The data come from the RNA Mapping Database (RMDB), library M2RFPK. Structure probing data (2A3) for a 207-nucleotide construct. Reactivities are rounded to 0.1 and cut off at 0 and 3.
RNA sequence: GGGAACGACUCGAGUAGAGUCGAAAACAUUGUUCUGAUCAUCUGAAGAUCAGCUAUUAGAAGAGAAAGAUCAGUUAAGUCCUUUGGCCCUGAUCAGCUUGAUACAAGAACUACUGAUUUCAACUUCAAAACGGGUGCUACUUCGGUAGCACCCGAAUCAAGACUUUCUCUUCGGAGAAAGUCUUGAAAAAGAAACAACAACAACAAC
Reactivity to 2A3 in 0.01 (KOAc 150mM, MgCl2 10mM, bicine 150mM(pH8.5), 24C), signal-to-noise 1, nucleotides 027 to 156: c050a020u130u250g020u190u100c010u000g000a010u000c010a020u020c110u220g080a200a060g000a040u010c020a020g020c020u060a040u290u240a070g040a050a000g020a000g000a080a060a000g010a050u030c000a000g010u010u110a150a010g010u030c000c030u040u150u240g050g000c000c030c080u120g070a070u100c100a010g020c020u060u070g070a020u100a130c020a040a000g010a080a000c010u020a020c000u020g020a040u030u050u030c130a120a070c030u050u060c000a040a050a110a030c000g000g000g000u000g000c000u000a000c000u010u030c180g120g000u000a000g000c000a000c000c000c010g000a000a000